[RMDB]
RNA sequence: GGGAACGACUCGAGUAGAGUCGAAAAUCGCGCAUGCCUGGCUCCAGCUCCGGAUUAUGGACCAGAGCACCCCGGUUGCUGAUGCCGACAGAUGAUUCAAAGUAUUGAUAGGCUUCAUGGUAAACCACUUAGCAUUUCUGUUCGCAGAAAUGCUAAGAAAAGAAACAACAACAACAAC
Reactivity to 2A3 in 0.01 (KOAc 150mM, MgCl2 10mM, bicine 150mM(pH8.5), 24C), signal-to-noise 2, nucleotides 027 to 126: u040c000g000c000g000c070a040u070g030c010c000u030g020g030c070u030c030c000a000g000c040u030c040c020g050g000a030u120u080a120u230g020g020a010c010c050a040g010a020g050c030a070c020c010c000c000g020g000u060u050g000c020u020g010a020u050g000c000c010g030a010c010a040g080a050u110g020a020u090u110c080a100a090a040g050u040a110u090u060g060a070u020a050g010g000c010u000u020c030a020u070g090g020u090a120a060a040c010c030a000
Reactivity to DMS in 0.01 (KOAc 150mM, MgCl2 10mM, bicine 150mM(pH8.5), 24C), signal-to-noise 3, nucleotides 027 to 126: u010c100g000c140g030c080a120u000g020c030c010u010g000g010c110u000c040c030a060g010c070u000c090c080g010g010a110u000u000a060u000g000g000a100c030c010a030g000a120g000c040a100c070c050c010c030g050g010u000u000g000c030u000g000a060u000g000c020c010g000a120c250a080g000a060u010g000a080u000u000c100a070a080a160g020u010a070u010u000g000a050u000a140g000g000c020u000u000c040a030u010g010g010u000a030a050a070c040c030a200
An RNA of 177 nucleotides, treated with 2A3 and DMS and read out base by base.
The data come from the RNA Mapping Database (RMDB), library OK2TST.
Conditions: 150 mM KOAc, 10 mM MgCl2 and 150 mM bicine (pH 8.5), 24 C.
For 2A3 the reverse transcriptase was SuperScript II with manganese.
For DMS, 2,561 sequencing reads were counted.